RNA sequence: GGGAACGACUCGAGUAGAGUCGAAAAAAGGGCACAAGUUAAUGUCCUGUGUCUGCUGGGCAUUGAGAAAGACACCUGUCACUUGUAUAGCGUCCACAUGUAAUUUAAACCCAACCCUAAGGAAGCAAUUGUGGUAACAUUUCGAUGUUACCACAAUAAAAGAAACAACAACAACAAC
Reactivity to DMS in 0.01 (KOAc 150mM, MgCl2 10mM, bicine 150mM(pH8.5), 24C), signal-to-noise 4, nucleotides 027 to 126: a100a080g020g010g020c100a060c060a030a060g000u010u000a050a030u000g010u000c000c000u000g010u000g020u010c150u020g040c050u010g000g010g000c020a010u000u010g010a080g010a100a060a090g000a060c060a130c080c090u010g010u010c040a110c050u010u000g010u000a080u000a070g020c040g010u000c030c030a050c110a060u000g000u020a070a070u010u000u000a050a050a130c020c020c000a070a120c020c020c010u020a100a090g010g000a020a060g010c130a100
Reactivity to 2A3 in 0.01 (KOAc 150mM, MgCl2 10mM, bicine 150mM(pH8.5), 24C), signal-to-noise 2, nucleotides 027 to 126: a000a000g000g000g020c010a010c000a050a080g030u060u070a080a030u080g010u020c000c030u010g010u010g000u050c160u160g070c010u020g000g000g050c000a030u040u040g030a040g100a090a100a010g040a010c020a050c050c100u080g020u060c010a010c070u010u050g040u110a120u100a060g030c010g010u010c000c000a040c010a060u080g020u080a090a070u020u100u140a090a090a070c000c000c000a010a030c020c010c010u050a080a070g070g020a070a000g060c000a030

Source information:
This 177-nucleotide RNA was probed chemically with DMS and 2A3. The data come from the RNA Mapping Database (RMDB), library OK2TRN. High 2A3 reactivity points to a flexible backbone, as in loops and unpaired stretches. High DMS reactivity at an A or C suggests that its Watson-Crick edge is free. The reactions ran in a buffer of 150 mM KOAc, 10 mM MgCl2 and 150 mM bicine (pH 8.5), at 24 C.